[RMDB]
RNA sequence: GGGAACGACUCGAGUAGAGUCGAAAAUGCAAUUAGUUCGCUAAUUGCACAUGUCUAGUCGCUAGAAAACGAUCAAAUCUAGCGACUAGACUUUAUUGAUCGGGGGCCUGGCUUUCGAGCCAGGCAAGAAGUUCUUGGAAUUCGUUCCAAGAACUUCAAAAGAAACAACAACAACAAC
Reactivity to DMS in 0.01 (KOAc 150mM, MgCl2 10mM, bicine 150mM(pH8.5), 24C), signal-to-noise 2, nucleotides 027 to 126: u020g000c000a000a000u000u000a000g010u000u020c190g020c000u000a000a000u000u000g010c000a040c200a080u010g010u000c000u000a000g010u000c010g030c000u000a000g010a020a060a080a070c170g000a040u000c140a080a100a090u000c000u000a000g010c000g000a000c000u000a000g000a010c000u000u000u000a020u000u000g000a070u010c040g000g000g000g010g010c010c020u000g000g000c000u000u000u010c170g010a020g000c020c000a010g010g000c020a010a010